[RMDB]
Source: RMDB library M2PK50, as collected in RNAgym. Chemical mapping of a 177-nucleotide RNA with DMS and 2A3. Values are in units of 0.01, from 0 to 300, in steps of 10. For 2A3 the reverse transcriptase was SuperScript II with manganese.
RNA sequence: GGGAACGACUCGAGUAGAGUCGAAAAUCUAAGCGCUUCGGCGCUUAGAAAAGAACGCUAAUUCGCAAAGCGAGGGCGCGAGAGCGGCCAUACGCGAAGAAAAAACCUCGGUCUUCGGACCGAGGAACUUCAAAAACAAGUUCGCUUGUUUUUGAAGAAAAGAAACAACAACAACAAC
Reactivity to DMS in 0.01 (KOAc 150mM, MgCl2 10mM, bicine 150mM(pH8.5), 24C), signal-to-noise 2, nucleotides 027 to 126: u000c000u010a000a020g010c000g000c020u000u010c220g030g020c000g030c000u000u000a000g000a020a050a080a080g000a150a180c070g010c050u000a060a160u000u000c000g030c010a080a110a070g010c020g020a140g010g010g000c020g010c000g000a170g000a190g000c010g000g000c000c000a110u010a030c190g010c010g000a030a060g030a000a050a060a110a150a110c000c000u000c000g000g000u000c000u000u020c210g040g000a010c000c000g000a000g000g000a000a010
Reactivity to 2A3 in 0.01 (KOAc 150mM, MgCl2 10mM, bicine 150mM(pH8.5), 24C), signal-to-noise 2, nucleotides 027 to 126: u000c000u000a000a000g000c000g020c030u020u140c300g090g000c000g000c010u010u000a000g000a000a010a000a000g040a110a010c050g000c030u020a100a170u070u030c010g000c060a110a110a040g010c040g080a160g010g020g120c030g020c010g020a040g020a010g060c010g070g210c000c000a060u060a070c090g000c000g010a030a050g050a030a150a010a000a010a030c000c000u000c000g000g030u030c010u020u060c200g080g020a000c000c000g000a000g000g000a000a000